[RMDB]
RNA sequence: GGGAACGACUCGAGUAGAGUCGAAAACUGAUGAGGUCAGAAAUGCUCGUGACUAGAUGGGAGCGCAGUAAUCAUGUAGUAUCUGCUUAGCCUGAUACUGAAGUGUACUUGUAUCACUUAAAGCACAUCUACGCUCGCUAUUCGUAGCGAGCGUAGAAAAAGAAACAACAACAACAAC
Reactivity to 2A3 in 0.01 (KOAc 150mM, MgCl2 10mM, bicine 150mM(pH8.5), 24C), signal-to-noise 1, nucleotides 027 to 126: c010u010g000a080u050g120a050g100g080u000c000a020g050a070a110a040u140g010c030u000c050g080u050g050a050c030u040a000g030a110u060g000g000g070a080g050c030g000c000a000g000u050a010a090u030c060a030u110g040u200a030g000u020a040u020c000u000g000c030u140u040a040g050c000c010u020g020a020u000a000c000u030g040a070a030g010u020g030u030a090c020u060u060g020u080a040u130c030a010c050u000u160a090a000a000g010c030a000c000a100
Reactivity to DMS in 0.01 (KOAc 150mM, MgCl2 10mM, bicine 150mM(pH8.5), 24C), signal-to-noise 1, nucleotides 027 to 126: c040u000g030a100u000g010a090g000g050u000c020a090g040a120a110a110u010g000c040u000c090g010u000g000a100c050u000a050g020a090u000g030g000g040a080g000c100g010c020a050g040u020a030a050u000c050a090u010g020u000a010g000u000a050u010c020u000g000c060u000u020a060g000c090c020u020g010a030u000a030c040u000g010a080a060g000u000g000u000a110c150u000u000g020u010a060u000c020a050c070u000u000a090a020a050g000c060a070c150a100
Overview: Structure probing data (2A3 and DMS) for a 177-nucleotide construct. For 2A3 the reverse transcriptase was SuperScript II with manganese. Conditions: 150 mM KOAc, 10 mM MgCl2 and 150 mM bicine (pH 8.5), 24 C. It was measured as part of the RMDB library OK2TRN. DMS adducts were read by reverse transcription with MarathonRT.